[RMDB]
RNA sequence: GGGAACGACUCGAGUAGAGUCGAAAAGACGAUCACCGGAUCCGGCAUGGCGUCGAAGAUGAGCUCCCUCGCCGCAGGAAGCACGUCCACCCGCGCAUCGUGGGCGAGGAGGGAGAGGAGCACCAUGCUUCCUGCACCUAUUCGUAGGUGCAGGAAGAAAAGAAACAACAACAACAAC
Reactivity to 2A3 in 0.01 (KOAc 150mM, MgCl2 10mM, bicine 150mM(pH8.5), 24C), signal-to-noise 2, nucleotides 027 to 126: g040a020c020g030a110u060c030a010c090c060g080g030a190u090c100c010g000g010c080a060u080g020g000c030g010u030c030g000a050a020g110a110u170g040a020g010c010u020c020c010c000u000c010g190c030c020g130c000a010g050g090a050a030g030c020a010c040g050u050c040c010a040c030c020c020g070c000g010c060a160u130c040g070u020g000g000g000c020g010a030g080g030a050g020g020g010a020g040a060g020g020a020g010c040a030c000c040a050u080g010
Reactivity to DMS in 0.01 (KOAc 150mM, MgCl2 10mM, bicine 150mM(pH8.5), 24C), signal-to-noise 4, nucleotides 027 to 126: g000a120c090g000a080u010c060a110c040c040g010g010a110u020c110c090g000g000c060a070u010g020g020c060g020u000c050g010a110a120g000a100u010g000a160g010c000u000c020c000c010u000c000g000c040c030g010c020a090g010g000a060a070g010c010a080c000g000u000c080c130a110c170c090c030g010c070g000c080a080u000c060g000u000g010g010g000c000g010a050g010g000a090g000g010g010a040g000a050g010g030a150g000c050a100c020c050a060u000g010
The record gives the reactivity of an RNA of 177 nucleotides to 2A3 and DMS.
2A3 adducts were read by reverse transcription with SuperScript II with manganese.
The DMS profile rests on 3,152 reads.
The reactions ran in a buffer of 150 mM KOAc, 10 mM MgCl2 and 150 mM bicine (pH 8.5), at 24 C.
The data come from the RNA Mapping Database (RMDB), library OK2TRN.